An RNA of 177 nucleotides, treated with DMS and 2A3 and read out base by base.
RNA sequence: GGGAACGACUCGAGUAGAGUCGAAAAGAUAUGGAUCCGGAAGGGAGCGUAGUCGGAAACGACGAAACGCUUUGAUCUUCGGGAUCCUAAGUCAAAACUUAUGUGUUCGUUCGCGAACACAUAAGAAGAAUCAGAAGCUGUUCGCAGCUUCUGAUUCAAAAGAAACAACAACAACAAC
Reactivity to DMS in 0.01 (KOAc 150mM, MgCl2 10mM, bicine 150mM(pH8.5), 24C), signal-to-noise 1, nucleotides 027 to 126: g010a020u000a220u000g020g000a000u000c010c000g000g010a030a020g000g010g000a020g040c000g020u040a250g000u000c010g000g000a090a050a150c000g040a000c000g020a060a110a070c000g010c000u000u040u040g010a120u000c000u000u000c000g020g020g010a010u010c000c010u000a000a050g000u000c010a160a030a090a120c000u000u000a010u000g000u000g000u000u000c000g020u010u010c230g000c030g010a010a000c000a000c000a000u000a000a000g010a100a130
Reactivity to 2A3 in 0.01 (KOAc 150mM, MgCl2 10mM, bicine 150mM(pH8.5), 24C), signal-to-noise 2, nucleotides 027 to 126: g040a000u020a020u080g000g010a000u030c050c080g160g040a010a010g040g010g060a060g010c010g020u060a010g040u070c010g030g000a060a020a030c020g020a020c000g030a080a060a000c010g030c000u220u150u300g160a060u050c020u010u020c080g080g000g000a000u000c000c010u010a060a000g040u000c020a020a000a110a170c000u010u000a000u010g020u000g010u020u000c030g000u030u050c300g030c010g190a000a000c030a000c000a000u000a010a000g000a010a020
The RNA was probed in 150 mM KOAc, 10 mM MgCl2 and 150 mM bicine (pH 8.5) at 24 C.
It was measured as part of the RMDB library TTRDEL.